This 177-nucleotide RNA was probed chemically with 2A3 and DMS. The data come from the RNA Mapping Database (RMDB), library RFMREP. DMS adducts were read by reverse transcription with MarathonRT.

[RMDB]
RNA sequence: GGGAACGACUCGAGUAGAGUCGAAAAAGCUAGUCUCAGUUGGCAGUGUUCUACACACGGAAAGACUCAUGGGACGGUUAUCUCGACGAUUUGGCUAUCGAUUUGGCUGCCGACACUUGACGACUACCACACACAGAAAGUUCGCUUUCUGUGUGUGAAAAGAAACAACAACAACAAC
Reactivity to 2A3 in 0.01 (KOAc 150mM, MgCl2 10mM, bicine 150mM(pH8.5), 24C), signal-to-noise 4, nucleotides 027 to 126: a000g030c050u030a020g000u010c010u000c020a030g020u040u000g030g000c010a030g020u010g070u130u060c120u200a080c050a000c020a020c130g050g040a060a080a030g050a040c000u030c080a080u060g030g000g040a020c010g000g000u090u060a080u040c040u040c030g090a080c010g040a090u060u030u120g040g020c070u040a030u080c060g120a140u020u040u190g050g000c010u000g000c000c010g030a020c030a040c060u060u080g020a030c070g000a000c010u000a010c000
Reactivity to DMS in 0.01 (KOAc 150mM, MgCl2 10mM, bicine 150mM(pH8.5), 24C), signal-to-noise 4, nucleotides 027 to 126: a080g020c090u000a040g010u000c000u000c020a080g010u010u000g010g020c100a090g030u000g020u010u000c100u000a110c170a110c100a110c080g000g010a060a100a120g000a060c050u000c110a100u010g010g010g010a060c090g000g000u020u000a090u000c040u000c040g000a130c120g000a110u020u000u010g010g020c100u010a100u000c060g010a170u000u000u000g020g000c030u000g010c020c020g000a040c080a060c210u000u000g000a060c070g020a090c050u000a060c090